[RMDB]
RNA sequence: GGGAACGACUCGAGUAGAGUCGAAAAUCAACCACUCCACCUCCAGAAGCACUUUCGGCCCCUGCGUGACCAACAAAGCGAGAUCUGAAACCACAAAAGUUUCUCGUUACAGCUAUGGCCUCCAUUUAAAAUCGGAAAUGAUCACGCUUAACUGUCCAUGCUUCGAUUAAUUCGUUAAUCGAAGCAUAAAAGAAACAACAACAACAAC
Reactivity to 2A3 in 0.01 (KOAc 150mM, MgCl2 10mM, bicine 150mM(pH8.5), 24C), signal-to-noise 2, nucleotides 027 to 156: u140c010a010a020c040c030a030c050u040c050c000a120c030c010u030c010c010a020g030a050a030g060c070a060c130u100u160u060c090g040g000c010c000c000c020u000g000c030g040u020g020a010c020c000a030a110c020a040a120a020g010c010g000a000g020a020u030c020u080g050a090a050a100c120c020a070c070a170a140a000a000g020u030u080u000c010u000c000g020u030u040a020c020a090g020c020u100a080u100g040g000c010c020u080c000c020a050u040u150u120a130a140a060a100u090c070g000g070a040a020a080u070g020a040u080c000a000c070g000c000u060u080a050a020c030u060g070u150c070c000
Reactivity to DMS in 0.01 (KOAc 150mM, MgCl2 10mM, bicine 150mM(pH8.5), 24C), signal-to-noise 1, nucleotides 027 to 156: u010c030a070a150c050c030a110c070u000c000c030a050c020c000u020c010c010a100g000a080a080g030c070a040c080u000u000u010c060g030g000c000c010c020c050u010g010c060g020u000g030a170c020c010a030a100c050a040a060a050g010c060g010a200g010a080u010c050u000g010a120a100a070c020c060a060c060a130a020a100a080g040u000u000u000c000u020c010g020u000u000a130c040a120g040c030u010a080u010g000g000c050c060u000c050c020a140u000u000u000a040a060a170a180u000c060g000g000a080a150a110u000g010a050u000c030a080c030g000c010u000u000a060a070c060u000g000u010c060c120

An RNA of 207 nucleotides, treated with 2A3 and DMS and read out base by base. The reactions ran in a buffer of 150 mM KOAc, 10 mM MgCl2 and 150 mM bicine (pH 8.5), at 24 C. It was measured as part of the RMDB library OK3TST.